[RMDB]
RNA sequence: GGGAACGACUCGAGUAGAGUCGAAAAAUUGGAAAAGUUUAAAGAUAAAAAACUUUCUUUAGUGAUUGAUUCUUAUGACAUGUGAAAUGUCCUUGAUAACAUUAUUCCAAGGUUAAAAAACUUAAUCAAACGUACCAUUAUUCGUAAUGGUACGUUUAAAAGAAACAACAACAACAAC
Reactivity to DMS in 0.01 (KOAc 150mM, MgCl2 10mM, bicine 150mM(pH8.5), 24C), signal-to-noise 1, nucleotides 027 to 126: a130u000u000g010g010a030a070a170a300g000u000u000u000a110a010a050g000a120u040a000a000a040a110a210a030c030u020u000u000c080u010u000u010a060g020u000g000a260u000u000g000a150u000u000c010u020u000a070u020g010a000c000a010u010g020u020g020a030a080a010u000g000u000c020c090u010u010g030a100u010a050a050c030a070u000u000a100u000u000c000c010a020a030g000g000u020u010a000a040a150a050a040a070c070u000u000a040a060u000c120